[RMDB]
RNA sequence: GGGAACGACUCGAGUAGAGUCGAAAAAAGAUUCCUUGACAAAAAAUAGGCCCUAUGAUAAAUUUAAAGUAACUUGUGACAAAGUCGUGCAUGGAUGCACUAAAAAGACACCCUAUUGUGGUAGGGUAAGUUAAACCAGGUUCGCCUGGUUUAACUUAAAAGAAACAACAACAACAAC
Reactivity to DMS in 0.01 (KOAc 150mM, MgCl2 10mM, bicine 150mM(pH8.5), 24C), signal-to-noise 1, nucleotides 027 to 126: a020a050g000a170u010u020c000c000u000u100g050a080c060a000a010a090a050a090a060u000a050g000g000c010c050c000u010a100u040g000a160u010a030a100a120u050u070u000a060a040a210g030u030a120a130c080u000u010g000u010g030a120c020a120a030a090g050u000c050g020u000g010c060a090u010g020g000a150u020g000c000a020c050u000a000a060a050a080a050g010a150c160a080c000c000c020u000a030u000u050g020u000g000g050u000a020g000g000g040u000
Reactivity to 2A3 in 0.01 (KOAc 150mM, MgCl2 10mM, bicine 150mM(pH8.5), 24C), signal-to-noise 1, nucleotides 027 to 126: a000a000g130a050u050u010c040c000u010u070g190a140c080a140a020a000a180a000a000u020a050g050g000c000c000c000u060a060u170g090a080u210a210a120a170u120u220u050a160a040a090g000u030a000a140c000u030u060g010u010g040a000c030a000a000a120g030u160c020g010u000g050c070a080u170g030g090a090u080g000c000a000c140u060a050a040a040a030a030g170a020c000a060c070c000c000u000a000u000u150g050u030g050g000u000a000g000g000g090u000
About this RNA
Structure probing data (DMS and 2A3) for a 177-nucleotide construct. For DMS, 1,432 sequencing reads were counted. Conditions: 150 mM KOAc, 10 mM MgCl2 and 150 mM bicine (pH 8.5), 24 C. 2A3 adducts were read by reverse transcription with SuperScript II with manganese. DMS adducts were read by reverse transcription with MarathonRT.